An RNA of 177 nucleotides, treated with 2A3 and DMS and read out base by base. For DMS, 1,117 sequencing reads were counted.
RNA sequence: GGGAACGACUCGAGUAGAGUCGAAAAGCUCUAUCCUUCGGGAUAGAGCAAACGCUACGAUUGACGGUGAAGCCGGACCUGUGGUUCAGCAUAGUCGGGCUAAAAGUCACAUGUUCGCAUGUGACAACUCCUUAGCACAGUUCGCUGUGCUAAGGAGAAAAGAAACAACAACAACAAC
Reactivity to 2A3 in 0.01 (KOAc 150mM, MgCl2 10mM, bicine 150mM(pH8.5), 24C), signal-to-noise 1, nucleotides 027 to 126: g000c020u040c000u000a000u030c000c030u010u100c220g070g000g000a000u000a000g000a000g000c000a000a000a020c010g000c030u130a040c010g140a120u020u120g090a060c080g040g000u090g100a090a020g020c030c030g070g000a070c010c070u120g030u120g080g070u140u190c020a000g020c000a020u020a030g010u040c000g000g040g020c010u010a040a010a000a130g000u000c000a000c000a010u000g000u070u020c290g000c030a000u010g000u000g000a000c000a000a020
Reactivity to DMS in 0.01 (KOAc 150mM, MgCl2 10mM, bicine 150mM(pH8.5), 24C), signal-to-noise 1, nucleotides 027 to 126: g000c030u000c000u010a000u000c000c000u000u000c200g050g000g000a020u000a000g000a010g000c030a000a020a060c070g000c010u000a050c140g000a080u020u000g050a140c060g000g000u000g000a110a140g000c000c020g000g010a020c010c000u020g020u000g010g010u010u000c100a100g010c050a090u040a150g010u000c020g000g020g040c050u000a120a050a040a070g000u000c000a010c000a010u000g010u000u030c300g000c000a000u000g000u000g000a010c000a060a110

The RNA was probed in 150 mM KOAc, 10 mM MgCl2 and 150 mM bicine (pH 8.5) at 24 C.